[RMDB]
RNA sequence: GGGAACGACUCGAGUAGAGUCGAAAAAUAUCGGGCCGCGUUUUGAGACGGCAUUCCCAGAUUUUAUUGCUAAGUAUCAGUUUUUGGAUAUGCUGCAAGCUAGCCUUUUUGAUUUUGAAGAUUGGCAAGAAUAUUGGGCUUUUCAAAGUCGCUUUGAUAUGCAUUAUCAGUUCGCUGAUAAUGCAUAAAAAGAAACAACAACAACAAC
Reactivity to 2A3 in 0.01 (KOAc 150mM, MgCl2 10mM, bicine 150mM(pH8.5), 24C), signal-to-noise 2, nucleotides 027 to 156: a010u200a120u170c070g000g090g000c030c000g050c050g020u020u050u280u270g120a100g010a020c010g000g000c030a010u010u000c000c000c000a000g000a030u150u160u100u180a070u100u070g020c030u080a200a010g040u030a120u050c030a020g040u010u030u070u250u220g040g010a080u070a000u170g010c010u000g000c020a000a160g050c030u110a040g000c020c000u060u130u000u060u090g120a120u090u220u180u150g050a030a010g020a040u010u070g010g080c000a040a000g060a130a100u170a160u150u140g040g040g010c000u110u100u020u120c020a070a050a000g020u070c050g120c120u010u030u030g010a050
Reactivity to DMS in 0.01 (KOAc 150mM, MgCl2 10mM, bicine 150mM(pH8.5), 24C), signal-to-noise 1, nucleotides 027 to 156: a160u020a050u000c090g010g020g000c000c010g000c020g020u010u000u010u000g020a230g020a010c020g020g050c010a150u000u010c010c000c000a250g010a170u010u000u000u000a060u010u010g000c000u000a140a160g040u000a080u010c080a140g000u000u000u000u020u000g020g010a060u010a020u010g040c030u010g010c040a060a160g050c090u000a130g010c000c020u020u020u000u020u010g010a220u000u010u040u000g000a130a110g010a060u000u000g020g030c020a060a180g000a070a060u000a090u000u010g010g010g020c010u010u000u000u000c050a050a020a080g000u000c020g010c020u000u000u000g010a200